The data come from the RNA Mapping Database (RMDB), library OK1LIB. The record gives the reactivity of an RNA of 177 nucleotides to DMS and 2A3. For DMS the reverse transcriptase was MarathonRT. Conditions: 150 mM KOAc, 10 mM MgCl2 and 150 mM bicine (pH 8.5), 24 C.
[RMDB]
RNA sequence: GGGAACGACUCGAGUAGAGUCGAAAAAGUUUCUGGAACAACACUUCAAACAUGUGAAAAACAAUCAAGUUCAGGUUUUGUGUGUUGUACGAAGCCGGGAUUAUAUGUCAUGUAUUGAAAAGGGACACCAUUAUGGGAGGUUCGCCUCCCAUAAUGGAAAAGAAACAACAACAACAAC
Reactivity to DMS in 0.01 (KOAc 150mM, MgCl2 10mM, bicine 150mM(pH8.5), 24C), signal-to-noise 2, nucleotides 027 to 126: a020g000u000u000u000c000u010g020g010a120a040c030a060a140c150a060c080u010u000c020a040a020a010c020a030u000g020u020g020a090a080a050a110a140c220a130a020u060c070a070a040g000u000u000c000a030g030g000u000u030u000u010g000u000g010u040g000u000u010g000u010a040c050g000a060a040g010c000c000g000g000g030a010u000u030a050u000a080u010g000u000c020a000u000g020u000a120u010u000g000a030a000a000a080g000g010g000a090c220a130
Reactivity to 2A3 in 0.01 (KOAc 150mM, MgCl2 10mM, bicine 150mM(pH8.5), 24C), signal-to-noise 1, nucleotides 027 to 126: a000g030u050u010u010c020u030g050g040a000a000c040a050a000c020a020c040u020u040c020a000a010a010c040a000u110g020u210g290a060a090a090a090a030c090a000a110u300c120a090a050g000u060u030c030a020g000g000u000u020u020u020g040u000g000u000g060u060u050g040u000a000c070g050a030a020g000c000c110g000g020g020a040u140u000a080u160a050u220g020u070c060a030u030g020u040a300u090u100g040a090a090a000a010g060g000g010a000c000a040